This 177-nucleotide RNA was probed chemically with 2A3 and DMS.
DMS adducts were read by reverse transcription with MarathonRT.
The data come from the RNA Mapping Database (RMDB), library M2PK50.
The RNA was probed in 150 mM KOAc, 10 mM MgCl2 and 150 mM bicine (pH 8.5) at 24 C.

RNA sequence: GGGAACGACUCGAGUAGAGUCGAAAAGACAAGUGCUUCGGCACUUGUCAAAUAAGCAAGUAGAAAUGGCGAAACUACAUGCAUCGAAAGAAAGGCCAUAAAAAACUGUCCAGUUCGCUGGACAGAACUACUAAAAAGACUUCGGUCUUUUUAGUAGAAAAGAAACAACAACAACAAC
Reactivity to 2A3 in 0.01 (KOAc 150mM, MgCl2 10mM, bicine 150mM(pH8.5), 24C), signal-to-noise 2, nucleotides 027 to 126: g010a000c000a000a000g000u000g000c010u040u130c200g060g000c010a000c000u010u000g000u000c000a010a000a000u030a000a000g000c000a030a030g000u010a010g020a040a160a080u070g040g030c010g020a060a020a000c010u010a000c010a020u030g010c000a110u090c130g120a080a070a070g160a090a100a010g250g000c000c050a010u220a000a170a000a010a020a010c010u010g000u010c000c000a000g010u040u070c160g050c070u000g000g000a000c000a000g000a010a010
Reactivity to DMS in 0.01 (KOAc 150mM, MgCl2 10mM, bicine 150mM(pH8.5), 24C), signal-to-noise 2, nucleotides 027 to 126: g000a000c000a000a000g030u000g000c020u010u030c220g010g010c000a010c000u000u010g000u000c010a010a050a050u000a090a100g010c000a020a060g020u000a000g010a030a080a020u000g010g010c030g020a210a100a110c020u010a000c000a120u000g010c000a160u000c090g000a110a100a110g000a050a070a140g010g010c020c020a100u050a000a040a100a100a080a110c000u000g000u000c000c000a010g010u010u000c190g010c000u010g000g000a020c000a000g000a040a110